Structure probing data (DMS and 2A3) for a 177-nucleotide construct. 2A3 adducts were read by reverse transcription with SuperScript II with manganese. DMS (dimethyl sulfate) methylates the pairing face of unpaired adenines and cytosines.
RNA sequence: GGGAACGACUCGAGUAGAGUCGAAAAUAUUCAAAUUACGAAAGAAUCACCGAACUACUCAUUCUAAUUAAGAUAAAGGAGAACGACAAAUAUGGAAAUGGCAAAAGAACAAGAGUUAAUCCUUGUCGUAAAUACAAUGUUUCGACAUUGUAUUUACAAAAGAAACAACAACAACAAC
Reactivity to DMS in 0.01 (KOAc 150mM, MgCl2 10mM, bicine 150mM(pH8.5), 24C), signal-to-noise 6, nucleotides 027 to 126: u050a080u000u010c030a060a060a110u030u040a090c180g000a090a080a080g010a080a060u020c090a120c100c020g030a020a080c050u000a040c040u010c020a140u020u000c030u020a070a070u040u030a080a050g000a070u010a050a040a070g010g020a060g010a050a040c080g040a050c050a050a040a070u020a060u010g000g010a040a050a050u030g010g010c100a050a030a060a070g010a070a040c100a020a030g000a070g000u000u020a050a170u020c050c000u000u020g010u010c100
Reactivity to 2A3 in 0.01 (KOAc 150mM, MgCl2 10mM, bicine 150mM(pH8.5), 24C), signal-to-noise 9, nucleotides 027 to 126: u200a040u020u070c030a030a060a110u240u110a130c100g090a080a050a090g060a020a070u050c030a040c100c010g020a050a030c020u040a020c010u020c020a060u120u000c040u070a120a180u190u080a140a050g060a140u110a090a130a020g050g010a050g040a070a020c020g090a020c060a050a090a020u210a110u140g080g020a050a110a060u070g060g000c050a050a060a060a030g060a060a030c030a080a010g040a000g060u060u080a060a050u040c010c000u010u030g050u040c040
The reactions ran in a buffer of 150 mM KOAc, 10 mM MgCl2 and 150 mM bicine (pH 8.5), at 24 C.